The record gives the reactivity of an RNA of 207 nucleotides to 2A3.
RNA sequence: GGGAACGACUCGAGUAGAGUCGAAAAUAUGUCCACGUACUGCUUGGACAGGAACUCUAGAUGGUUGCGCAUGAUCCACUCGAAGAAGUACUCGGUUUCGUGGAAGUUGCGCAACGCCAUAAGUUCGCGGUGCGAGGAAAGGUACUCCAGGUAGCACCUUCUAGUACGGCUUCGGCCGUACUAGAAGAAAAGAAACAACAACAACAAC
Reactivity to 2A3 in 0.01 (KOAc 150mM, MgCl2 10mM, bicine 150mM(pH8.5), 24C), signal-to-noise 1, nucleotides 027 to 156: u300a100u140g050u000c000c040a010c030g020u070a030c020u040g020c000u050u150g050g000a020c050a040g120g000a040a000c070u110c070u120a110g040a240u070g100g010u000u010g000c000g010c000a010u030g080a120u010c000c000a000c000u080c030g030a110a020g020a210a000g150u110a110c050u000c000g000g070u090u130u150c000g000u000g000g000a000a090g130u030u080g000c000g000c000a000a000c010g000c000c000a000u070a130a000g000u010u010c000g000c000g050g000u040g000c000g010a030g000g050a020a060a020g010g050u030a020c020u040c030c010a050g110g060u060a010g030c050a070c070
The data come from the RNA Mapping Database (RMDB), library OK3TST.
Values are in units of 0.01, from 0 to 300, in steps of 10.
2A3 adducts were read by reverse transcription with SuperScript II with manganese.